[RMDB]
RNA sequence: GGGAACGACUCGAGUAGAGUCGAAAAAUGUACCAGCGUGCGUGCGGUUUAACAGGUAGGAGAUACCGCAGUGCGAAUCUUCGUGGCGGCCUACGAAAACUACCGCUAGGACCUUCUCUGGGUCGAAGGGAUAGAAGAACAUGACGCACACGGGACGGGUGGGACAUGGAUUCGUCCAUGUCCCACCAAAAGAAACAACAACAACAAC
Reactivity to 2A3 in 0.01 (KOAc 150mM, MgCl2 10mM, bicine 150mM(pH8.5), 24C), signal-to-noise 1, nucleotides 027 to 156: a000u130g030u070a080c050c000a030g010c050g010u030g000c000g000u000g000c000g040g140u000u030u030a100a030c030a070g000g140u000a000g050g040a030g020a100u230a110c000c000g050c000a080g140u180g130c040g000a080a110u120c120u260u070c050g000u020g030g020c000g020g060c000c000u000a050c030g030a160a000a000a000c020u000a000c000c000g100c000u020a040g000g170a090c010c000u150u180c030u080c050u180g030g000g090u050c040g000a020a050g200g000g000a080u140a170g030a020a020g050a000a000c000a000u170g000a010c000g000c000a000c000a000c030g000g020g010a080c050g010
The record gives the reactivity of an RNA of 207 nucleotides to 2A3.
Reactivities are given for positions 27 through 156.
The reactions ran in a buffer of 150 mM KOAc, 10 mM MgCl2 and 150 mM bicine (pH 8.5), at 24 C.